[RMDB]
Source: RMDB library M2PK50, as collected in RNAgym. Chemical mapping of a 177-nucleotide RNA with 2A3 and DMS. The reactions ran in a buffer of 150 mM KOAc, 10 mM MgCl2 and 150 mM bicine (pH 8.5), at 24 C.
RNA sequence: GGGAACGACUCGAGUAGAGUCGAAAACUGACUAGGUUCGCCUAGUCAGAAAUAAAAGGAGCAAAAGCAUGAGCUCCUAAUAAUCAUGCAAGACGAAAGUCAAAACUCGUUACUUCGGUAACGAGAACCUAGUGAAAGAGUUCGCUCUUUCACUAGGAAAAGAAACAACAACAACAAC
Reactivity to 2A3 in 0.01 (KOAc 150mM, MgCl2 10mM, bicine 150mM(pH8.5), 24C), signal-to-noise 3, nucleotides 027 to 126: c000u000g000a000c010u000a000g010g040u040u030c160g050c050c000u010a000g000u000c000a000g000a000a010a000u130a010a120a020a040g010g020a010g000c020a060a110a210a030g010c010a020u010g010a000g020c010u000c010c010u000a000a000u020a000a010u020c010a000u020g000c030a020a100g010a020c010g050a110a020a010g010u020c000a010a010a020a100c000u000c000g010u000u000a000c010u020u040c220g100g010u000a000a000c000g000a000g000a010a010
Reactivity to DMS in 0.01 (KOAc 150mM, MgCl2 10mM, bicine 150mM(pH8.5), 24C), signal-to-noise 2, nucleotides 027 to 126: c000u000g000a010c010u000a010g010g020u000u020c260g010c000c010u000a010g010u000c000a000g000a030a070a090u000a080a080a130a150g000g000a000g000c010a060a070a110a170g020c030a020u010g000a040g000c000u000c000c000u000a020a030u010a020a080u010c000a000u000g000c010a190a150g010a020c010g000a120a100a100g010u010c000a120a080a050a200c010u000c000g000u010u010a000c000u000u010c200g030g010u000a000a010c000g000a010g000a020a090